This 177-nucleotide RNA was probed chemically with DMS and 2A3. The reactions ran in a buffer of 150 mM KOAc, 10 mM MgCl2 and 150 mM bicine (pH 8.5), at 24 C. For 2A3 the reverse transcriptase was SuperScript II with manganese. For DMS the reverse transcriptase was MarathonRT. The DMS profile rests on 2,365 reads. For 2A3, 807 sequencing reads were counted.
RNA sequence: GGGAACGACUCGAGUAGAGUCGAAAAGAAGAACUUGAAAAAGAUGGUUAUUCUGUUGAAGUAAUUGACUUACGUACUGUUCAACCAAUCGAUGUUGACACAAUUGUAGCUUCAGUUGAAAAAACUGCAUGCUAAUGACGUUCGCGUCAUUAGCAUGAAAAGAAACAACAACAACAAC
Reactivity to DMS in 0.01 (KOAc 150mM, MgCl2 10mM, bicine 150mM(pH8.5), 24C), signal-to-noise 3, nucleotides 027 to 126: g010a100a100g010a050a040c020u000u010g000a110a160a110a080a080g010a120u000g000g000u000u000a120u000u000c020u000g010u000u010g000a070a060g000u010a070a070u010u000g000a080c080u000u000a040c090g010u000a040c130u000g010u010u000c010a010a040c010c160a110a150u000c260g000a080u010g020u000u000g000a040c100a060c060a020a090u000u010g010u000a050g010c050u000u000c010a010g030u000u000g000a010a040a050a080a030a010c030u000g010
Reactivity to 2A3 in 0.01 (KOAc 150mM, MgCl2 10mM, bicine 150mM(pH8.5), 24C), signal-to-noise 1, nucleotides 027 to 126: g050a000a010g060a060a050c070u100u100g040a150a030a000a030a090g070a030u120g030g020u060u000a030u080u020c010u010g120u050u040g050a050a030g010u100a010a160u080u120g140a050c060u080u140a030c000g070u030a020c030u070g050u190u010c010a020a010c010c020a070a120u190c070g100a230u160g010u090u050g020a010c010a000c030a190a140u160u190g060u040a010g040c040u010u000c040a030g000u000u040g010a050a060a010a000a000a030c070u050g000